The record gives the reactivity of an RNA of 177 nucleotides to 2A3 and DMS. DMS adducts were read by reverse transcription with MarathonRT. Values cover nucleotides 27 to 126. High DMS reactivity at an A or C suggests that its Watson-Crick edge is free.

RNA sequence: GGGAACGACUCGAGUAGAGUCGAAAAUUAGCCGGCCCAGAGCGUGCUAACGGGUAACGCCGCGAGCGUUGGGCCGAACGGGGUGGCUUCCGGCGCGGCGGUGAGCAGCACGCCGAACUGAAAUCGACAUGUAAGUCCGGUUCGCCGGACUUACAUGAAAAGAAACAACAACAACAAC
Reactivity to 2A3 in 0.01 (KOAc 150mM, MgCl2 10mM, bicine 150mM(pH8.5), 24C), signal-to-noise 3, nucleotides 027 to 126: u130u070a030g100c040c040g040g030c030c000c010a040g010a010g020c010g010u010g000c010u060a110a150c110g110g060g060u080a070a010c010g000c010c000g020c000g020a080g010c020g020u050u010g000g000g000c000c000g010a030a030c040g020g080g000g010u160g030g020c000u220u080c010c000g020g000c010g000c000g000g030c040g040g000u050g010a040g060c060a000g000c000a000c010g010c000c010g010a040a020c070u120g040a020a030a150u100c030g090a070
Reactivity to DMS in 0.01 (KOAc 150mM, MgCl2 10mM, bicine 150mM(pH8.5), 24C), signal-to-noise 2, nucleotides 027 to 126: u010u010a010g010c050c040g000g040c010c030c000a080g000a130g000c030g000u000g000c000u000a180a200c090g030g010g050u030a080a110c060g000c000c000g020c060g010a050g040c020g000u000u000g030g000g010c040c000g000a050a070c160g000g020g010g020u020g000g040c030u070u050c110c020g000g010c070g010c000g020g000c010g000g000u010g000a110g000c190a060g000c000a000c000g010c040c020g000a100a050c140u030g000a050a070a090u060c070g000a200